[RMDB]
This 170-nucleotide RNA was probed chemically with DMS and 2A3.
The reactions ran in a buffer of 150 mM KOAc, 10 mM MgCl2 and 150 mM bicine (pH 8.5), at 24 C.
For DMS, 2,160 sequencing reads were counted.
High 2A3 reactivity points to a flexible backbone, as in loops and unpaired stretches.
Reactivities are given for positions 27 through 129.
DMS (dimethyl sulfate) methylates the pairing face of unpaired adenines and cytosines.
The 2A3 profile rests on 4,808 reads.
RNA sequence: GGGAACGACUCGAGUAGAGUCGAAAACACUAUUUUACUCUUGGAUGCAAAAUUUUAACGCUCACCCCACGCAACAAGUGGAGUGGCGUUUCUGACUUGUCCCUCAAACAAAAACUCCUUUACACCUCACGCUCCGGGUUCGCCCGGAGCAAAAGAAACAACAACAACAAC
Reactivity to DMS in 0.01 (KOAc 150mM, MgCl2 10mM, bicine 150mM(pH8.5), 24C), signal-to-noise 3, nucleotides 027 to 129: c050a000c120u090a070u050u050u000u000a090c000u010c010u020u070g030g000a120u100g140c060a070a020a230a020u080u040u000u230a040a000c010g000c130u070c030a050c010c010c010c010a050c020g060c230a040a160c180a050a120g010u000g020g070a050g030u020g080g000c000g000u000u000u130c100u070g020a060c040u050u000g000u030c010c000c000u070c090a140a170a240c190a110a030a050a000a050c010u010c090c000u000u080u010a190c110a040c060c000u020c050a190c160
Reactivity to 2A3 in 0.01 (KOAc 150mM, MgCl2 10mM, bicine 150mM(pH8.5), 24C), signal-to-noise 4, nucleotides 027 to 129: c010a000c020u070a180u040u160u090u110a100c040u050c000u080u030g030g050a020u100g040c020a010a080a090a150u180u140u030u040a030a000c010g030c050u140c050a000c000c050c010c000a000c030g140c010a130a300c100a300a000g000u000g010g010a000g000u000g000g030c010g000u000u000u000c030u020g010a000c000u010u080g010u000c000c010c000u040c100a030a090a040c050a000a130a050a010a020c040u080c000c020u090u180u090a030c020a030c010c030u090c040a020c060